[RMDB]
RNA sequence: GGGAACGACUCGAGUAGAGUCGAAAAACAGGCCCAUGCUGUUAAGGUUGUUGCAGAAAACCAGCUUGCGUGUUCCACUCAACUUUUCCUAGCAUACAAAGACAAGCCAAAAUUUUCGCCACUUGUGCUACCAGUUGCAAAAAUACAGUAAAGAAAGCUAACAUCUGACUUUCGAGUCAGAUGUUAGAAAAGAAACAACAACAACAAC
Reactivity to 2A3 in 0.01 (KOAc 150mM, MgCl2 10mM, bicine 150mM(pH8.5), 24C), signal-to-noise 3, nucleotides 027 to 156: a000c050a030g110g020c000c030c020a010u070g000c000u070g030u080u120a080a060g050g000u050u000g020u000u030g080c050a020g060a040a110a010a050c010c020a040g020c010u080u140g050c060g030u040g000u070u070c010c020a060c040u050c010a020a060c000u030u020u030u030c000c010u020a020g000c000a050u050a100c050a020a090a020g060a040c030a120a000g000c010c030a050a150a110a100u060u110u020u110c050g010c020c000a040c030u020u030g020u090g080c010u040a040c010c030a020g030u010u020g020c020a000a030a000a040a040u120a050c060a000g080u180a020a050a080g170a080a110a050g040
Reactivity to DMS in 0.01 (KOAc 150mM, MgCl2 10mM, bicine 150mM(pH8.5), 24C), signal-to-noise 2, nucleotides 027 to 156: a070c100a140g000g030c010c050c030a140u000g020c000u020g010u010u000a080a080g040g020u020u010g000u000u000g040c070a090g000a070a040a060a070c040c020a130g020c100u000u020g040c030g010u000g000u000u000c020c050a110c110u010c020a070a030c020u000u000u000u010c030c010u010a110g030c010a150u000a150c070a080a100a080g000a090c050a080a090g010c010c010a050a080a090a120u000u000u000u000c040g000c040c030a060c030u000u020g020u010g010c010u000a060c030c010a160g010u000u000g010c020a000a020a060a080a130u010a110c070a070g000u020a050a000a130g010a090a070a210g030
The record gives the reactivity of an RNA of 207 nucleotides to 2A3 and DMS.
Values cover nucleotides 27 to 156.
The DMS profile rests on 3,317 reads.
For DMS the reverse transcriptase was MarathonRT.
For 2A3, 1,563 sequencing reads were counted.
It was measured as part of the RMDB library OK3TST.
For 2A3 the reverse transcriptase was SuperScript II with manganese.